[RMDB]
RNA sequence: GGGAACGACUCGAGUAGAGUCGAAAAAUCGGCAAAUGGGGCCCCUCGCUCGUAUCUCCGAGAGGAGACGAGAAAGAGGAGGAUCUCCCUUUGCCAUCCGAGGGAACUACGUUCUCCUUCGGAUGCCUAAGGUCGAUCUUCGGAUCGACCAAAAGAAACAACAACAACAAC
Reactivity to 2A3 in 0.01 (KOAc 150mM, MgCl2 10mM, bicine 150mM(pH8.5), 24C), signal-to-noise 4, nucleotides 027 to 129: a000u080c040g010g000c010a000a000a060u170g000g000g000g010c000c000c020c000u000c020g050c010u000c000g050u060a180u060c000u000c010c010g030a030g000a040g090g000a000g000a000c010g000a000g000a080a160a010g020a000g040g020a140g030g020a060u070c070u080c000c000c000u000u000u010g000c000c000a000u000c010c010g010a010g000g000g000a060a030c030u150a130c300g070u140u040c050u030c070c000u000u020c000g000g000a000u010g040c000c010u050a120a030
Reactivity to DMS in 0.01 (KOAc 150mM, MgCl2 10mM, bicine 150mM(pH8.5), 24C), signal-to-noise 4, nucleotides 027 to 129: a090u000c030g040g080c010a000a000a000u010g040g030g020g020c040c050c010c010u020c000g040c020u010c040g010u000a260u000c020u010c010c020g020a240g020a240g020g040a000g010a020c040g000a020g040a030a080a050g020a020g000g000a120g030g000a000u040c070u040c020c010c020u050u000u000g030c040c000a060u040c010c010g010a020g050g000g020a050a140c000u020a190c290g040u150u020c180u030c020c030u000u010c020g010g020a010u040g010c050c000u030a150a080